[RMDB]
RNA sequence: GGGAACGACUCGAGUAGAGUCGAAAAAGAAGAACGACAUCGUAGUGCAGUAUUUUAAUGGCUUUAAAGACUGUAUCGAUGAGGAGCGCACUUGGCAACUUUCUCAUCAAAUUAAGCCGUCAAACCGACCAUAUUUAUCCUUCGGGAUAAAUAUGGUAAAAGAAACAACAACAACAAC
Reactivity to DMS in 0.01 (KOAc 150mM, MgCl2 10mM, bicine 150mM(pH8.5), 24C), signal-to-noise 6, nucleotides 027 to 126: a110g010a080a060g010a090a080c080g000a100c060a040u030c080g020u010a090g010u010g000c000a030g010u000a060u010u000u010u020a040a050u020g010g010c040u010u000u010a080a040a070g000a050c040u010g000u010a060u020c090g000a010u000g000a040g000g010a030g010c270g000c060a110c210u040u020g010g010c040a140a100c050u020u000u010c000u020c000a040u000c050a070a070a110u020u020a040a030g010c010c010g020u040c160a040a080a100c110c100g010
Reactivity to 2A3 in 0.01 (KOAc 150mM, MgCl2 10mM, bicine 150mM(pH8.5), 24C), signal-to-noise 9, nucleotides 027 to 126: a000g200a040a010g030a070a010c070g110a030c050a070u100c070g060u090a060g070u030g010c010a000g000u030a180u010u090u010u070a120a100u150g050g010c030u050u020u070a070a100a010g060a020c020u040g030u080a070u200c080g000a010u010g000a010g010g010a010g000c060g010c020a060c180u180u180g120g000c050a090a110c040u040u130u080c010u030c010a050u020c020a010a020a070u140u100a040a010g000c020c020g040u070c070a070a040a080c050c040g050